[RMDB]
The record gives the reactivity of an RNA of 177 nucleotides to 2A3 and DMS. DMS adducts were read by reverse transcription with MarathonRT. 2A3 adducts were read by reverse transcription with SuperScript II with manganese. The RNA was probed in 150 mM KOAc, 10 mM MgCl2 and 150 mM bicine (pH 8.5) at 24 C.

RNA sequence: GGGAACGACUCGAGUAGAGUCGAAAAACUAGUAUGUACAGGGGUGAGUUGACCUGUCAUCUAGACUGCUGACCAUCAACUCACCGGUCAGCUGGAUGAUGUCAACAGAGUACGACAUCAGUACUCAGUGUAAGGAUUGGUUCGCCGAUCUUUACACAAAAGAAACAACAACAACAAC
Reactivity to 2A3 in 0.01 (KOAc 150mM, MgCl2 10mM, bicine 150mM(pH8.5), 24C), signal-to-noise 9, nucleotides 027 to 126: a000c010u020a010g060u120a060u080g070u100a010c010a020g030g030g030g060u140g080a140g050u060u090g100a070c000c020u010g010u000c000a000u000c000u010a030g070a140c060u050g000c000u000g000a000c010c000a040u110c040a050a120c060u030c100a060c030c050g000g000u000c000a000g000c010u020g030g020a060u040g000a010u030g050u050c010a010a020c030a100g060a030g070u060a030c060g030a020c040a060u050c020a020g020u040a030c030u020c070a010
Reactivity to DMS in 0.01 (KOAc 150mM, MgCl2 10mM, bicine 150mM(pH8.5), 24C), signal-to-noise 9, nucleotides 027 to 126: a250c010u000a000g000u050a020u010g000u060a010c010a010g000g010g010g010u010g000a060g030u010u010g000a060c010c060u010g010u000c000a010u000c010u000a020g000a180c080u000g010c010u000g000a010c000c030a150u020c120a050a060c090u010c080a070c170c150g010g000u010c000a010g010c000u000g000g000a110u010g000a030u000g000u020c020a020a120c150a140g010a090g010u020a040c080g010a070c080a040u020c080a060g020u010a030c030u010c040a190